Structure probing data (2A3) for a 207-nucleotide construct. For 2A3, 807 sequencing reads were counted. High 2A3 reactivity points to a flexible backbone, as in loops and unpaired stretches. 2A3 adducts were read by reverse transcription with SuperScript II with manganese. The reactions ran in a buffer of 150 mM KOAc, 10 mM MgCl2 and 150 mM bicine (pH 8.5), at 24 C. Reactivities are given for positions 27 through 156.

RNA sequence: GGGAACGACUCGAGUAGAGUCGAAAACAAUGUGCUUCGGCACAUUGAAAAAAUCCUAAGUCUGGCUCGUUUGACGGGGAGAUCAUGGUCGGAAACGACCAGAUCGAAGAACCCGAGAGCCAGAUAUGGAAAAAAGUGGAUACUUCGGUAUCCACAACUUCACAUCUUUCUUCGGAAAGAUGUGAAGAAAAGAAACAACAACAACAAC
Reactivity to 2A3 in 0.01 (KOAc 150mM, MgCl2 10mM, bicine 150mM(pH8.5), 24C), signal-to-noise 1, nucleotides 027 to 156: c000a020a030u000g000u000g010c020u060u110c250g120g000c000a000c000a000u010u000g000a000a000a000a010a000a020u040c010c000u020a110a030g010u000c010u030g000g000c010u000c020g130u170u240u300g130a120c070g010g000g010g000a140g010a010u000c070a300u070g010g010u000c000g030g000a080a050a130c000g010a000c000c000a010g000a000u000c000g090a250a050g010a040a030c020c000c020g070a090g000a000g100c010c000a000g000a000u000a000u030g040g000a030a000a000a140a050a050g010u000g020g000a000u010a000c010u030u050c300g080g000u000a000u010c010c000a000c000a000a000